This 207-nucleotide RNA was probed chemically with 2A3. 2A3 adducts were read by reverse transcription with SuperScript II with manganese. It was measured as part of the RMDB library M2RFPK.
[RMDB]
RNA sequence: GGGAACGACUCGAGUAGAGUCGAAAAACGGACUACGGUCCGAAGGGUUCGGGGUACUAGUGUGAAUGCCCGGCUAGUACCCUGUGCUAGUGGUUUAUCUACUGAUGAUCAAUUAAGGGCAUUUGAAAAAAGACUCCUAACUUCGGUUAGGAGUCAACCGACAUUUAGUCUUCGGACUAAAUGUCGGAAAAGAAACAACAACAACAAC
Reactivity to 2A3 in 0.01 (KOAc 150mM, MgCl2 10mM, bicine 150mM(pH8.5), 24C), signal-to-noise 1, nucleotides 027 to 156: a000c010g000g000a000c010u040a030c190g070g030u010c010c000g010a090a030g130g030g010u090u240c040g000g010g010g000u000a000c000u000a000g010u020g020u010g290a010a000u000g000c000c000c000g000g000c000u000a000g000u000a000c000c000c000u010g050u010g010c020u080a050g070u030g120g060u120u230u140a060u070c010u020a050c130u090g060a080u080g000a040u150c130a120a130u190u260a240a300g000g000g000c000a010u010u000u040g000a040a040a000a000a000a000g000a000c000u000c000c000u000a000a000c000u050u040c170g030g000u000u000a000g000g020a000g010u000c000a000a000